[RMDB]
RNA sequence: GGGAACGACUCGAGUAGAGUCGAAAAAACUUGCCCAAUUGGAGAGAGGCAGUUAUGAGACGUAUAUUUUGUAACCGGGGUAGAAUACCGGUGAUUGACUGGAGGGCAAGUCUGGUGCCAGCAGCCGCAUGCUCUGUUUGUUCGCAAACAGAGCAUGAAAAGAAACAACAACAACAAC
Reactivity to DMS in 0.01 (KOAc 150mM, MgCl2 10mM, bicine 150mM(pH8.5), 24C), signal-to-noise 1, nucleotides 027 to 126: a020a030c070u030u000g010c000c010c000a230a070u000u010g010g030a070g020a120g010a070g020g010c030a050g030u010u010a090u000g010a130g010a040c120g000u010a070u020a050u000u000u020u000g010u000a130a030c010c020g020g000g000g010u000a090g000a120a090u000a060c050c000g000g000u000g030a090u010u020g000a050c060u000g000g010a160g020g010g020c010a010a020g000u000c010u000g030g020u000g010c030c040a080g020c080a100g020c020c110g000